[RMDB]
RNA sequence: GGGAACGACUCGAGUAGAGUCGAAAAUCACACUUAGCUACCUUUGCUGAGUUGGAAGCUGCGCAGAAAGCCUAUCAGGAAGCUAUGGACUCUGGUGACACCUCACCACAAGUUCUUAAGGCUUUGCCUUUUGACCAGACUUCGGUCUGGUCAAAAGAAAAGAAACAACAACAACAAC
Reactivity to DMS in 0.01 (KOAc 150mM, MgCl2 10mM, bicine 150mM(pH8.5), 24C), signal-to-noise 1, nucleotides 027 to 126: u020c100a060c100a000c040u010u000a040g020c030u000a060c130c220u000u010u000g000c020u000g000a050g020u000u010g020g000a100a110g000c020u000g000c160g000c090a100g040a110a080a090g000c010c040u020a090u000c190a130g000g000a050a010g000c020u000a090u000g030g000a020c010u030c300u000g000g020u000g000a110c260a080c280c260u000c030a010c020c000a020c200a000a050g000u000u010c030u000u000a110a160g000g000c010u000u000u000g010c070